An RNA of 177 nucleotides, treated with DMS and 2A3 and read out base by base. Conditions: 150 mM KOAc, 10 mM MgCl2 and 150 mM bicine (pH 8.5), 24 C. For 2A3, 3,025 sequencing reads were counted. Source: RMDB library OK2TST, as collected in RNAgym.
[RMDB]
RNA sequence: GGGAACGACUCGAGUAGAGUCGAAAACGAGGACCAUCGACAUGCACGCUCCAUCGACGCCCCUGAAGCUGGCCCGACGCCAGACGAUCAACGUGACGGCCGACAGCAUGGUCCGCGCGCGGCCGCACUCCGUAUAAUGCUUCGGCAUUAUACGGAGAAAAGAAACAACAACAACAAC
Reactivity to DMS in 0.01 (KOAc 150mM, MgCl2 10mM, bicine 150mM(pH8.5), 24C), signal-to-noise 4, nucleotides 027 to 126: c080g000a140g000g010a050c010c000a080u000c050g000a090c110a080u020g020c050a070c070g010c040u000c020c020a090u010c030g010a150c090g000c040c010c010c050u020g010a110a090g000c020u000g000g000c020c070c140g020a110c160g000c010c010a020g000a090c060g010a130u000c090a060a120c160g010u000g010a140c040g010g000c000c010g000a070c070a110g010c050a040u010g000g010u000c020c010g030c120g020c050g010c030g010g010c010c010g010c060a100
Reactivity to 2A3 in 0.01 (KOAc 150mM, MgCl2 10mM, bicine 150mM(pH8.5), 24C), signal-to-noise 3, nucleotides 027 to 126: c060g000a070g000g040a010c020c000a080u080c050g030a030c060a090u140g020c060a000c070g050c010u060c010c000a050u070c040g070a080c090g090c020c020c030c020u030g110a070a030g020c020u040g010g000c020c090c050g070a060c100g000c010c010a010g000a030c030g040a090u110c050a090a090c090g030u080g140a090c010g010g010c000c010g040a080c010a020g030c040a070u050g020g050u030c010c030g000c020g000c000g030c000g000g000c010c000g020c010a010